[RMDB]
RNA sequence: GGGAACGACUCGAGUAGAGUCGAAAAAAGCAUGCAGGCUCAUGGGAUGAGAGCCCUUGAAGAUAGUUCCGAAUCAUACUUGGCGAGUCUAACUACGCCAUGGCUGCUUUAUUUAGCGUAACGCUAGAUUAGCCUCGUCCCGAUAAGAUCGGGAGAGCACACUAGAAUCCUUCGGGAUUCUAGUGUGAAAAGAAACAACAACAACAAC
Reactivity to DMS in 0.01 (KOAc 150mM, MgCl2 10mM, bicine 150mM(pH8.5), 24C), signal-to-noise 3, nucleotides 027 to 156: a040a050g010c040a090u000g000c080a060g000g020c020u000c030a120u010g010g010g010a120u000g010a160g010a080g010c030c010c020u000u020g020a110a110g010a100u010a090g010u000u000c010c020g020a110a120u010c050a140u010a090c050u000u000g030g030c000g020a110g020u000c070u000a040a130c030u000a120c030g000c010c020a030u000g010g030c040u000g000c010u010u000u000a050u010u000u000a010g020c000g020u010a090a100c130g020c010u000a000g010a030u000u000a070g010c050c010u000c010g000u000c010c000c010g020a040u010a060a090g030a300u000c000g020g000g000a130g000a050g010
Reactivity to 2A3 in 0.01 (KOAc 150mM, MgCl2 10mM, bicine 150mM(pH8.5), 24C), signal-to-noise 7, nucleotides 027 to 156: a000a000g070c040a030u110g020c050a030g030g000c000u010c030a020u140g050g030g050a050u130g080a070g020a010g070c000c010c010u060u080g040a060a030g040a110u080a040g040u040u040c010c010g020a040a040u080c070a040u070a200c030u020u030g010g000c000g010a010g020u040c070u120a060a110c010u200a170c030g010c010c000a000u020g040g000c040u050g000c000u040u130u090a040u020u040u020a030g010c020g070u130a090a070c130g000c010u000a000g000a050u060u070a020g020c000c010u020c020g250u070c020c000c000g000a020u060a110a110g100a130u020c000g000g010g000a010g000a000g000